The data come from the RNA Mapping Database (RMDB), library OK1LIB. An RNA of 177 nucleotides, treated with DMS and 2A3 and read out base by base. For DMS, 1,599 sequencing reads were counted. DMS adducts were read by reverse transcription with MarathonRT.
RNA sequence: GGGAACGACUCGAGUAGAGUCGAAAAGAAUUGGUAUGUAAGCUACGUCUUCCGGUAGCUGCGUCACACUUUAAGAGUGUGCAUACUGAGCCGAAGCUCAGCUUCGGUCCCCCAAGGGAAGUACAAACACCCUACGCACUUUCGAGUGCGUAGGGUGAAAAGAAACAACAACAACAAC
Reactivity to DMS in 0.01 (KOAc 150mM, MgCl2 10mM, bicine 150mM(pH8.5), 24C), signal-to-noise 1, nucleotides 027 to 126: g000a060a030u010u000g000g000u000a010u020g000u040a300a130g000c000u000a000c000g000u010c050u020u000c030c030g010g010u000a000g000c000u000g030c030g000u000c000a000c000a050c000u000u010u090a130a010g000a000g000u000g030u000g000c010a060u000a000c010u000g000a030g000c000c000g000a000a000g000c000u080c300a110g010c000u020u030c000g000g010u010c070c020c000c070c060a170a160g010g010g030a030a000g020u000a030c190a190a160a140
Reactivity to 2A3 in 0.01 (KOAc 150mM, MgCl2 10mM, bicine 150mM(pH8.5), 24C), signal-to-noise 2, nucleotides 027 to 126: g130a010a070u020u020g000g000u000a000u000g020u000a000a030g000c000u000a000c020g030u030c000u020u010c000c000g010g000u000a010g000c000u000g000c000g000u000c000a000c000a000c030u110u140u270a300a150g220a010g200u000g000u000g000c000a000u000a000c000u000g000a000g000c000c000g030a000a000g020c030u070c300a070g000c000u030u000c000g030g000u000c020c000c000c000c010a010a060g010g000g000a010a010g020u040a030c070a010a060a010

Overview
The reactions ran in a buffer of 150 mM KOAc, 10 mM MgCl2 and 150 mM bicine (pH 8.5), at 24 C. For 2A3 the reverse transcriptase was SuperScript II with manganese.